[RMDB]
RNA sequence: GGGAACGACUCGAGUAGAGUCGAAAAAAGCGUGUCGGAGGGUUGGCUCCGUCAUCAACACAUUUCGGUUAAAUAUAACUGACAAAUCAAACAAUAAUUUCGCAGUAGCUGCGUAAUAGCCACUGCAUCGCCUAACAGCAUCUCCUACGUGCUGUUAUCAACAUCUACAGUUCGCUGUAGAUGUUGAAAAAGAAACAACAACAACAAC
Reactivity to DMS in 0.01 (KOAc 150mM, MgCl2 10mM, bicine 150mM(pH8.5), 24C), signal-to-noise 1, nucleotides 027 to 156: a080a040g030c160g000u000g010u000c010g000g000a000g000g000g030u000u000g030g000c000u010c010c010g030u000c050a100u000c260a040a140c040a160c080a100u000u000u000c010g020g010u000u010a030a130a190u010a180u010a020a040c040u010g020a160c080a110a040a060u020c060a090a110a090c090a060a200u020a060a190u000u000u000c090g020c020a080g000u000a010g040c020u010g080c180g050u000a080a050u000a060g030c020c000a020c010u000g030c000a160u000c040g050c030c110u000a040a040c020a040g000c010a040u020c060u000c020c030u000a040c090g010u000g000c010u000g000u000u010a160
Reactivity to 2A3 in 0.01 (KOAc 150mM, MgCl2 10mM, bicine 150mM(pH8.5), 24C), signal-to-noise 4, nucleotides 027 to 156: a010a010g130c090g010u060g060u080c000g000g000a000g030g000g010u220u030g030g030c000u000c000c000g070u060c020a000u000c000a000a030c010a000c020a030u090u140u080c050g020g020u070u060a090a300a100u170a170u040a110a090c020u030g040a030c070a070a080a060u170c070a060a040a200c050a050a080u140a170a080u140u240u230c080g010c000a010g010u030a050g010c040u060g040c050g040u090a030a100u130a130g000c010c010a020c000u000g020c010a010u100c030g050c010c020u040a000a000c000a000g000c030a000u020c050u080c090c040u110a020c060g020u010g000c000u010g000u000u010a030

Notes: The record gives the reactivity of an RNA of 207 nucleotides to DMS and 2A3. Conditions: 150 mM KOAc, 10 mM MgCl2 and 150 mM bicine (pH 8.5), 24 C. Source: RMDB library ARCHII, as collected in RNAgym. For DMS the reverse transcriptase was MarathonRT.